[RMDB]
RNA sequence: GGGAACGACUCGAGUAGAGUCGAAAAUAAUUGUCCUGUCUAAAUAGGAAAGCCAGUUUGUUCUCACACCUGUCAGGUGAGCAGGAAAUCUGAGACUUCCCCAGGAAUAGCCCAUCAACUCAGGGAGGGUCCGUCUUGUGCACAGAGAGUCUAGGGACACGAAAAUAUGAUUCGUCAUAUUUUCGUGAAAAGAAACAACAACAACAAC
Reactivity to 2A3 in 0.01 (KOAc 150mM, MgCl2 10mM, bicine 150mM(pH8.5), 24C), signal-to-noise 4, nucleotides 027 to 156: u090a000a070u070u100g050u050c040c010u020g040u040c060u120a150a130a200u140a100g040g030a090a040a010g050c020c010a030g030u030u090u060g130u140u060c020u010c010a060c000a010c030c020u150g050u200c040a040g090g030u050g030a030g020c040a020g010g000a050a090a030u030c040u030g040a050g070a250c000u020u020c030c000c010c010a020g000g050a030a100u040a060g020c000c000c010a060u070c020a040a110c040u040c100a010g000g000g050a030g010g020g020u020c020c030g020u000c010u040u100g040u040g020c030a030c020a050g070a010g000a000g050u000c030u030a030g030g010g020a000
Reactivity to DMS in 0.01 (KOAc 150mM, MgCl2 10mM, bicine 150mM(pH8.5), 24C), signal-to-noise 3, nucleotides 027 to 156: u000a060a060u020u010g000u010c020c010u000g030u000c060u000a060a090a130u010a120g030g000a050a050a080g000c030c020a030g010u000u010u000g020u000u000c020u000c030a130c060a070c010c000u000g020u000c090a150g000g020u010g020a280g000c050a050g020g000a050a060a050u010c060u010g010a110g020a140c040u000u000c020c000c000c030a140g000g000a080a130u000a090g010c020c030c050a140u000c050a060a090c050u000c050a050g040g000g020a100g010g020g010u000c030c030g000u000c020u010u010g020u000g010c040a090c020a090g000a110g000a110g020u000c030u000a090g000g000g020a300
Structure probing data (2A3 and DMS) for a 207-nucleotide construct. The reactions ran in a buffer of 150 mM KOAc, 10 mM MgCl2 and 150 mM bicine (pH 8.5), at 24 C. 2A3 adducts were read by reverse transcription with SuperScript II with manganese. It was measured as part of the RMDB library OK3TST. Reactivities are rounded to 0.1 and cut off at 0 and 3. For DMS, 5,807 sequencing reads were counted. The 2A3 profile rests on 2,996 reads. Reactivities are given for positions 27 through 156.